[RMDB]
RNA sequence: GGGAACGACUCGAGUAGAGUCGAAAAGCCGCUCCUUAGUUGGCGUCAUCAAAGCGGAAGACAUCUUCGCAGGCUUGCUGCAAUGCGCUGUCACUUUGAAUAUUGCAGUUGCGCGUCCAGCCGGUGAUCAUAGGAGAUCGUUCGCGAUCUCCUAUGAAAAAGAAACAACAACAACAAC
Reactivity to DMS in 0.01 (KOAc 150mM, MgCl2 10mM, bicine 150mM(pH8.5), 24C), signal-to-noise 6, nucleotides 027 to 126: g010c030c010g020c060u000c040c030u000u010a110g020u000u010g000g000c050g020u000c060a080u000c090a060a070a100g020c020g020g010a070a050g010a130c180a110u010c050u000u000c040g000c050a100g010g010c090u000u010g020c010u000g010c020a050a040u000g010c300g010c040u010g010u020c080a100c160u010u000u000g010a070a110u010a060u000u000g010c020a040g000u000u000g020c090g000c030g010u010c040c030a060g010c030c040g020g000u000g010a160
Reactivity to 2A3 in 0.01 (KOAc 150mM, MgCl2 10mM, bicine 150mM(pH8.5), 24C), signal-to-noise 5, nucleotides 027 to 126: g040c020c010g000c020u090c000c030u150u190a070g040u110u050g020g000c020g060u050c030a080u040c020a050a060a020g030c040g070g030a020a030g060a050c030a120u110c080u120u040c050g020c060a020g130g000c040u080u150g000c010u030g010c020a060a010u070g060c100g020c060u080g100u190c010a060c170u170u170u190g060a100a040u120a050u100u080g000c010a010g000u050u070g050c040g000c010g040u030c020c000a000g000c010c020g030g010u010g020a030
Chemical mapping of a 177-nucleotide RNA with DMS and 2A3.
The reactions ran in a buffer of 150 mM KOAc, 10 mM MgCl2 and 150 mM bicine (pH 8.5), at 24 C.
For 2A3, 5,392 sequencing reads were counted.
High 2A3 reactivity points to a flexible backbone, as in loops and unpaired stretches.